Chemical mapping of a 177-nucleotide RNA with 2A3 and DMS.

[RMDB]
RNA sequence: GGGAACGACUCGAGUAGAGUCGAAAAGAAACGGCCUACUUCGGCGCUCGGCGAGGCUGACGUGGCGACGCCUGGAAUUUCGACUUUCUUCGCAGCUUCGCCGCCCUGAGCCAGCGCGGCGCGGCCACCUAGUGGUAGCUUUCGAGCUACCACUAGGAAAAGAAACAACAACAACAAC
Reactivity to 2A3 in 0.01 (KOAc 150mM, MgCl2 10mM, bicine 150mM(pH8.5), 24C), signal-to-noise 7, nucleotides 027 to 126: g100a000a090a010c090g020g000c010c020u070a070c070u180u100c050g130g000c020g020c020u060c080g020g010c020g010a020g040g000c070u080g040a130c070g040u050g020g000c030g020a040c040g040c020c020u020g050g040a080a080u120u150u140c090g070a120c090u090u140u060c020u090u050c040g030c100a010g000c010u010u010c000g010c000c000g010c000c000c000u060g010a030g000c000c000a020g000c020g000c020g070g000c040g010c000g010g020c000c000a010
Reactivity to DMS in 0.01 (KOAc 150mM, MgCl2 10mM, bicine 150mM(pH8.5), 24C), signal-to-noise 3, nucleotides 027 to 126: g020a060a070a140c130g000g010c010c010u030a140c080u000u030c040g030g040c020g000c050u020c100g050g000c010g010a110g000g020c110u030g000a080c130g040u010g010g000c030g000a020c160g020c080c020u000g000g040a120a050u030u040u010c090g000a170c130u010u010u010c050u050u030c140g000c090a060g010c010u020u000c000g000c040c030g000c090c010c020u020g000a210g000c040c070a060g000c020g010c020g000g030c190g030c300g020g010c010c050a120
Conditions: 150 mM KOAc, 10 mM MgCl2 and 150 mM bicine (pH 8.5), 24 C. For DMS the reverse transcriptase was MarathonRT. Reactivities are given for positions 27 through 126. Source: RMDB library OK1LIB, as collected in RNAgym.